[RMDB]
RNA sequence: GGGAACGACUCGAGUAGAGUCGAAAACAAGAACUCGGAGCGUCCUCCACACCUUGCCACGUCUUACGUUCAGGCCUUGUUGGAGAGUGUGUGACUGCCACAGAAACCUGCAGCCUACUGGUAACAAAAAGGUUCUUGCCAGAAGGUGUAGAAAGAGGUCAGGAAGGGUAUUCGUACCCUUCCUGACAAAAGAAACAACAACAACAAC
Reactivity to 2A3 in 0.01 (KOAc 150mM, MgCl2 10mM, bicine 150mM(pH8.5), 24C), signal-to-noise 1, nucleotides 027 to 156: c010a000a050g050a070a000c000u060c150g060g060a040g000c000g010u000c000c000u020c000c020a010c000a000c000c000u010u090g050c060c020a010c010g050u000c060u180u240a090c050g050u100u110c070a030g000g060c000c000u050u130g010u080u220g000g020a070g000a020g020u100g000u000g020u020g020a050c060u110g020c020c020a040c010a040g140a010a100a040c030c000u040g010c000a100g250c010c010u030a030c000u010g000g000u070a120a020c040a070a130a060a000a010g070g030u090u080c040u000u030g000c010c000a000g020a020a010g000g000u030g000u000a000g060a000a120a020g160a010g050